[RMDB]
This 177-nucleotide RNA was probed chemically with DMS and 2A3. For 2A3 the reverse transcriptase was SuperScript II with manganese.

RNA sequence: GGGAACGACUCGAGUAGAGUCGAAAACAGCAUAGGCUCCGGGAUGUCUUGCUCCGAUUACUGUUAGCUUCCGACAGCGGGCGAAUUCGCCUUUUUUACAGUAUUCACACUCUCCACAAUAGAGUGCCUCCCUAAUGAACUUCGGUUCAUUAGGGAGAAAAGAAACAACAACAACAAC
Reactivity to DMS in 0.01 (KOAc 150mM, MgCl2 10mM, bicine 150mM(pH8.5), 24C), signal-to-noise 3, nucleotides 027 to 126: c110a060g000c110a120u020a050g000g000c020u020c060c050g040g020g010a030u020g000u000c020u030u000g010c070u000c040c070g010a080u030u000a070c030u000g030u000u020a080g000c050u000u000c050c090g010a100c150a080g000c070g000g010g030c030g000a200a090u030u000c040g000c010c000u020u030u020u000u030u010a030c050a030g000u030a020u020u020c100a200c030a020c030u000c000u000c100c030a090c300a070a120u020a030g000a040g030u000g000c270
Reactivity to 2A3 in 0.01 (KOAc 150mM, MgCl2 10mM, bicine 150mM(pH8.5), 24C), signal-to-noise 8, nucleotides 027 to 126: c030a010g030c030a070u090a100g050g010c020u030c040c030g050g010g030a040u070g050u030c020u040u050g020c010u050c020c020g040a050u040u090a050c010u020g020u060u070a020g020c010u070u040c070c060g050a040c040a030g010c040g000g010g000c010g050a090a230u200u200c030g010c000c000u050u070u010u010u050u080a020c010a020g010u020a090u070u110c020a010c000a000c050u020c000u050c040c030a100c040a120a130u110a100g020a000g010u020g000c000
It was measured as part of the RMDB libraries RFM100 and RFMREP. Conditions: 150 mM KOAc, 10 mM MgCl2 and 150 mM bicine (pH 8.5), 24 C.